[RMDB]
RNA sequence: GGGAACGACUCGAGUAGAGUCGAAAAACUCCAGCUGUUGGCAUGGGGGUGGCUGUCUGGGCAGGUCUAGGAUGCGGGUCCCUGUUGGCACUUGGAAUACAAGGAGGUUGUCCCUUGCCUGUUUCCCCCACCCUUCCUCUGUAGACAUACCCUGACCUAUCGUAAACCUAUUCGUAGGUUUACGAUAAAAAGAAACAACAACAACAAC
Reactivity to 2A3 in 0.01 (KOAc 150mM, MgCl2 10mM, bicine 150mM(pH8.5), 24C), signal-to-noise 1, nucleotides 027 to 156: a000c030u030c020c000a060g010c030u030g020u130u040g020g020c190a160u110g040g000g020g000g030u030g000g000c120u040g030u080c040u040g010g010g000c040a010g010g040u060c060u070a030g010g030a100u060g080c060g010g050g020u020c000c010c040u050g020u120u100g030g000c060a040c070u000u020g020g050a090a020u100a200c010a030a040g080g020a010g080g050u060u060g040u090c000c000c000u020u010g010c020c000u040g050u000u070u120c000c000c000c000c000a040c020c010c000u040u060c040c020u040c000u000g020u090a020g010a030c000a060u090a080c000c010c030u020g020a070c050c000
Reactivity to DMS in 0.01 (KOAc 150mM, MgCl2 10mM, bicine 150mM(pH8.5), 24C), signal-to-noise 1, nucleotides 027 to 156: a090c050u000c010c020a080g030c030u000g030u000u010g000g020c070a120u000g020g040g010g030g010u000g020g030c040u000g020u010c070u000g020g010g020c040a070g010g010u010c030u090a110g090g010a090u000g010c060g020g010g010u020c030c010c000u000g010u000u000g020g000c070a140c090u000u010g010g020a100a140u010a090c030a030a070g010g010a130g000g010u000u000g000u010c000c030c020u000u010g030c020c030u000g000u010u000u000c010c030c000c060c020a060c080c010c030u000u000c020c040u000c040u000g020u010a060g010a120c000a120u000a070c030c000c000u000g000a160c160c080
Overview:
This 207-nucleotide RNA was probed chemically with 2A3 and DMS. Reactivities are given for positions 27 through 156. Conditions: 150 mM KOAc, 10 mM MgCl2 and 150 mM bicine (pH 8.5), 24 C. For DMS, 4,686 sequencing reads were counted. For 2A3, 871 sequencing reads were counted. For 2A3 the reverse transcriptase was SuperScript II with manganese.